Notes:
Chemical mapping of a 177-nucleotide RNA with DMS and 2A3. Values cover nucleotides 27 to 126. The data come from the RNA Mapping Database (RMDB), library OK2TRN. 2A3 adducts were read by reverse transcription with SuperScript II with manganese.
RNA sequence: GGGAACGACUCGAGUAGAGUCGAAAAAUGUGAGCAACGGCACCACGGGCGUGAACAUCGUCGCGCGCAGCCUCCCGCUCGGCCCGGGCGACGAACUGCUCACCACCGAUCACGAGCACGGCGGCAACGAUAAUACGCUGUUCGCAGCGUAUUAUCGAAAAGAAACAACAACAACAAC
Reactivity to DMS in 0.01 (KOAc 150mM, MgCl2 10mM, bicine 150mM(pH8.5), 24C), signal-to-noise 4, nucleotides 027 to 126: a070u010g000u010g020a050g030c020a050a110c120g000g020c050a100c060c060a140c110g010g000g020c130g020u000g030a060a080c120a120u010c030g010u000c030g000c010g030c030g040c240a090g010c000c010u000c060c010c080g000c060u000c060g010g010c010c220c010g000g010g010c010g000a020c040g000a040a090c140u000g000c010u000c020a030c020c160a160c000c020g000a090u010c120a070c060g000a080g030c020a050c070g000g000c030g010g010c110a080a110
Reactivity to 2A3 in 0.01 (KOAc 150mM, MgCl2 10mM, bicine 150mM(pH8.5), 24C), signal-to-noise 2, nucleotides 027 to 126: a000u110g010u010g010a020g020c020a060a120c080g050g000c020a040c060c000a070c130g110g050g010c070g040u080g020a050a020c030a070u060c020g010u000c000g020c000g000c010g000c050a010g000c010c020u020c020c030c020g030c060u030c000g000g000c000c010c000g010g110g000c010g000a010c000g010a060a080c050u040g000c000u000c010a000c000c000a020c010c020g010a140u120c060a040c170g030a030g010c020a020c070g030g030c000g000g030c040a040a060